[RMDB]
RNA sequence: GGGAACGACUCGAGUAGAGUCGAAAAUGGCGAAAGCCUAAGGAAAGCAGCCGAUCCUUGGCACCGGCUGCAAGAAAAUAAAGCUAGCUAAGAAGGAAUGCUAGCAUAAGUGCUAAGGAAGAAUUAAGGAUCGAUCAUGGUUCGCCAUGAUCGAUCCAAAAGAAACAACAACAACAAC
Reactivity to 2A3 in 0.01 (KOAc 150mM, MgCl2 10mM, bicine 150mM(pH8.5), 24C), signal-to-noise 1, nucleotides 027 to 126: u070g020g030c010g020a060a030a000g060c000c000u060a060a000g080g000a180a110a010g000c000a000g000c030c010g010a100u060c020c000u010u000g010g060c000a000c000c000g010g030c000u030g000c000a000a040g040a000a060a000a000u180a010a090a000g000c020u080a000g000c020u040a060a160g110a140a100g300g170a300a130u090g020c010u010a010g000c000a020u030a020a000g010u000g020c010u030a010a010g070g030a010a010g080a040a040u300u300a190a080
Structure probing data (2A3) for a 177-nucleotide construct. Reactivities are given for positions 27 through 126. Source: RMDB library OK2TRN, as collected in RNAgym. For 2A3 the reverse transcriptase was SuperScript II with manganese.